[RMDB]
RNA sequence: GGGAACGACUCGAGUAGAGUCGAAAAGUUGUAAGGUUCGCCUUACAACAAAAUAAAACAGGCUAGUACCGGCCUCAAAAAGGUACGAAGAUCGAAAGAUCAAAAGACACUUGUUCGCAAGUGUCAACCAUAUCACACACUUCGGUGUGUGAUAUGGAAAAGAAACAACAACAACAAC
Reactivity to DMS in 0.01 (KOAc 150mM, MgCl2 10mM, bicine 150mM(pH8.5), 24C), signal-to-noise 1, nucleotides 027 to 126: g030u000u000g010u010a000a000g060g010u000u020c240g050c000c000u000u020a000c000a000a000c000a010a120a080a030u000a080a000a120a120c300a000g000g020c000u020a200g000u010a000c000c000g000g000c000c030u000c090a000a020a020a120a160g020g010u010a000c000g010a120a080g000a000u010c000g000a130a110a250g000a000u020c000a080a010a110a050g010a000c000a000c020u000u000g040u000u020c290g000c000a000a000g000u000g000u000c000a050a100
Reactivity to 2A3 in 0.01 (KOAc 150mM, MgCl2 10mM, bicine 150mM(pH8.5), 24C), signal-to-noise 2, nucleotides 027 to 126: g000u000u010g000u000a010a010g010g020u020u120c170g120c020c000u010u010a000c000a000a000c000a010a040a000a000u120a030a060a020a050c150a000g000g000c000u030a030g010u010a000c010c000g000g000c000c020u130c050a060a070a000a030a010g000g000u000a000c000g020a140a030g000a000u010c010g030a080a040a020g000a000u000c020a010a030a000a130g010a000c000a000c010u020u010g030u090u110c250g020c080a010a000g000u010g000u020c000a020a000